Source: RMDB library 15KREP, as collected in RNAgym. This 177-nucleotide RNA was probed chemically with 2A3 and DMS. The reactions ran in a buffer of 150 mM KOAc, 10 mM MgCl2 and 150 mM bicine (pH 8.5), at 24 C. Reactivities are given for positions 27 through 126.
[RMDB]
RNA sequence: GGGAACGACUCGAGUAGAGUCGAAAACUGGAGAAGGGAGACUCGGGAACGCCUAGCAUCUGAGGGACGAAGCCGCCCCCGGGCGCUCCCCUCGGAGAUCCACUGGGUGGGUUCACAUCCCCAACCCCUACGUUUAUAGGUUCGCCUAUAAACGUAGAAAAGAAACAACAACAACAAC
Reactivity to 2A3 in 0.01 (KOAc 150mM, MgCl2 10mM, bicine 150mM(pH8.5), 24C), signal-to-noise 1, nucleotides 027 to 126: c020u040g070g020a090g010a130a110g000g020g010a090g020a020c050u040c180g000g000g020a040a010c010g000c020c020u020a020g000c010a130u030c000u030g030a030g000g050g000a020c030g050a070a010g040c070c040g000c000c040c010c010c030g080g020g000c030g010c000u000c000c000c010c000u000c010g000g000a010g030a070u090c050c020a030c030u030g000g080g000u030g020g150g030u040u020c050a030c000a080u040c010c010c000c010a000a100c000c000c000
Reactivity to DMS in 0.01 (KOAc 150mM, MgCl2 10mM, bicine 150mM(pH8.5), 24C), signal-to-noise 2, nucleotides 027 to 126: c050u010g000g000a060g030a110a220g020g000g020a080g000a150c130u000c100g000g030g020a030a080c090g020c020c020u000a070g010c130a080u000c020u010g000a040g020g000g000a130c110g020a060a300g000c060c030g040c070c010c020c120c190g030g010g050c030g020c020u000c050c000c000c000u020c030g000g010a050g000a050u000c090c230a070c060u020g030g000g010u000g010g010g020u000u000c070a140c120a090u000c020c000c010c030a040a100c030c030c030